RNA sequence: GGGAACGACUCGAGUAGAGUCGAAAAGAGCUAAUAUCUUGAGGCAUCGUGCAUACGUUCAAGCUGACUAUAUAGUACGUAAAGGUGUCCGAAAGAUGCUUCUAGGUAGUCGAAUGAACGGCUCGAAGGGUUAAGAAUACUUCGGUAUUCUUAACCCAAAAGAAACAACAACAACAAC
Reactivity to 2A3 in 0.01 (KOAc 150mM, MgCl2 10mM, bicine 150mM(pH8.5), 24C), signal-to-noise 2, nucleotides 027 to 126: g010a000g010c010u030a030a010u140a080u070c010u000u020g000a000g000g010c030a000u000c000g030u050g040c020a060u030a070c000g000u010u050c040a020a000g010c030u010g030a050c010u000a000u020a020u010a100g040u010a000c020g020u020a030a040a060g020g010u020g000u030c030c010g050a090a050a000g000a000u000g000c000u000u020c000u010a000g000g030u000a000g020u100c140g060a030a010u100g010a020a000c000g000g000c000u000c000g010a050a000
Reactivity to DMS in 0.01 (KOAc 150mM, MgCl2 10mM, bicine 150mM(pH8.5), 24C), signal-to-noise 3, nucleotides 027 to 126: g000a020g000c000u000a080a140u000a010u020c010u000u000g000a080g000g000c000a030u000c010g030u010g010c130a090u010a200c030g020u000u010c120a060a090g000c020u000g000a040c090u030a060u020a070u030a000g000u000a020c140g010u010a040a110a100g010g030u000g000u000c040c060g010a020a090a150g000a030u000g000c010u010u010c010u010a060g010g010u010a020g020u030c060g000a130a160u010g000a060a060c150g000g000c010u000c020g000a100a080